[RMDB]
RNA sequence: GGGAACGACUCGAGUAGAGUCGAAAACGGCUAAAACCCGAUACGCGCAAACGCUACCGUAUGAGCGGAAAACGCGGCGUGUAGUACAGGAGUUUGGCGCUUAACAUGAUCUGUCAGGGAACCCCGGGCUGGGAGGUCGUUUCGACGAUCUCUCGGUAAAAGAAACAACAACAACAAC
Reactivity to 2A3 in 0.01 (KOAc 150mM, MgCl2 10mM, bicine 150mM(pH8.5), 24C), signal-to-noise 3, nucleotides 027 to 126: c010g050g000c010u050a020a000a030a020c000c000c000g010a010u000a030c010g010c000g000c010a060a020a010c030g000c010u020a020c010c000g010u040a120u210g150a090g040c000g020g050a040a050a020a020c040g000c020g010g000c000g000u090g000u000a060g020u050a030c100a110g010g040a180g030u000u040u020g130g000c000g000c090u070u110a100a030c010a170u170g010a130u000c020u040g180u040c020a040g000g110g050a050a050c010c020c000c000g000g050
Reactivity to DMS in 0.01 (KOAc 150mM, MgCl2 10mM, bicine 150mM(pH8.5), 24C), signal-to-noise 2, nucleotides 027 to 126: c090g010g000c010u000a020a000a020a050c050c010c010g010a080u020a020c030g020c000g000c010a030a060a300c050g030c060u010a140c020c020g010u010a120u040g010a120g020c010g000g000a050a040a100a120c110g000c300g000g000c010g010u000g010u010a010g000u030a090c130a090g010g000a070g000u000u000u000g000g000c000g000c120u000u000a290a290c300a240u010g000a190u010c150u000g000u000c060a040g010g000g000a030a040c040c010c000c010g020g010
Structure probing data (2A3 and DMS) for a 177-nucleotide construct. Conditions: 150 mM KOAc, 10 mM MgCl2 and 150 mM bicine (pH 8.5), 24 C. DMS adducts were read by reverse transcription with MarathonRT. For 2A3, 4,692 sequencing reads were counted. DMS (dimethyl sulfate) methylates the pairing face of unpaired adenines and cytosines. The DMS profile rests on 8,018 reads.